[RMDB]
RNA sequence: GGGAACGACUCGAGUAGAGUCGAAAAGAGCCCGUUGCAUUUUAUUUUCGAGCUUUCUUGCCGCCUUCUUGCUCGUAUUGCUGGACCGUUUCUUUGGCGGCUUCUUCGGUCCUAUUCGGGCUCGAGAGGGACCGUACGCGUUCGCGCGUGUGGUCCCAAAAGAAACAACAACAACAAC
Reactivity to 2A3 in 0.01 (KOAc 150mM, MgCl2 10mM, bicine 150mM(pH8.5), 24C), signal-to-noise 7, nucleotides 027 to 126: g010a010g010c000c000c000g050u040u050g020c060a080u020u040u110u200a190u100u250u120u170c010g000a000g000c010u150u210u120c040u150u180g000c010c000g030c000c000u130u200c080u150u200g000c000u000c010g040u070a110u070u150g040c060u060g010g000a000c000c000g020u020u090u090c160u070u070u060g000g000c010g000g000c000u020u030c010u010u010c000g000g000u000c000c000u030a070u040u060c010g000g000g000c000u000c010g010a020g020a000
Reactivity to DMS in 0.01 (KOAc 150mM, MgCl2 10mM, bicine 150mM(pH8.5), 24C), signal-to-noise 3, nucleotides 027 to 126: g010a010g000c010c000c000g020u020u040g020c030a030u010u040u050u030a030u050u040u030u030c020g010a020g020c010u010u050u030c100u030u000g020c030c000g000c010c020u020u040c140u000u020g000c000u000c020g010u010a040u000u000g000c040u010g010g010a030c020c000g010u010u000u030c130u020u040u020g000g010c020g000g000c000u010u010c040u010u010c020g000g010u000c000c010u000a120u030u010c020g000g010g020c010u000c020g000a070g000a190
The record gives the reactivity of an RNA of 177 nucleotides to 2A3 and DMS. Values cover nucleotides 27 to 126. For 2A3, 6,019 sequencing reads were counted. It was measured as part of the RMDB library OK1LIB. For DMS, 10,524 sequencing reads were counted.